[RMDB]
RNA sequence: GGGAACGACUCGAGUAGAGUCGAAAAGAAGCGCAAGGCCGCUGACCGACGGGAUAUUGUGGGGCUUACCACAGGGGACGCGGCGUUAUCACUUGCCUUUUAAGCCGACCGUCUGGGCUGCAUACAAACCACCCAACUAUCUUCGGAUAGUUGGGAACCAUAUGUCUUUCUUCGGAAAGACAUAUGGAAAAGAAACAACAACAACAAC
Reactivity to 2A3 in 0.01 (KOAc 150mM, MgCl2 10mM, bicine 150mM(pH8.5), 24C), signal-to-noise 3, nucleotides 027 to 156: g030a000a010g000c020g000c050a010a010g110g000c010c000g010c020u040g070a030c010c000g050a040c050g030g050g030a100u140a110u300u060g010u040g000g040g040g130c140u100u160a080c000c000a010c010a040g020g000g010g000a000c020g010c010g010g000c010g000u020u050a080u030c010a020c110u000u000g000c000c000u020u060u020u050a060a010g000c010c020g040a070c000c020g070u030c050u100g010g000g030c000u020g000c010a070u130a130c070a000a080a030c030c020a040c020c020c000a010a000c000u010a000u000c000u020u020c070g110g010a000u000a000g000u000u000g000g020g000a000a010
Reactivity to DMS in 0.01 (KOAc 150mM, MgCl2 10mM, bicine 150mM(pH8.5), 24C), signal-to-noise 2, nucleotides 027 to 156: g030a070a060g030c090g000c090a070a060g020g010c050c000g020c020u010g060a220c020c020g010a160c090g050g030g020a150u000a060u000u010g040u000g000g020g010g030c180u000u020a110c010c000a050c020a080g000g000g010g020a240c170g020c000g000g000c080g060u000u000a050u000c050a250c050u000u000g000c010c010u000u000u000u000a050a050g010c000c030g000a030c040c010g000u000c000u000g000g010g010c000u000g020c020a080u010a090c080a020a100a100c030c040a090c010c000c000a000a000c000u000a010u000c000u000u020c300g050g000a030u000a010g000u000u000g000g000g000a000a020
Structure probing data (2A3 and DMS) for a 207-nucleotide construct. The RNA was probed in 150 mM KOAc, 10 mM MgCl2 and 150 mM bicine (pH 8.5) at 24 C. Values are in units of 0.01, from 0 to 300, in steps of 10. DMS adducts were read by reverse transcription with MarathonRT.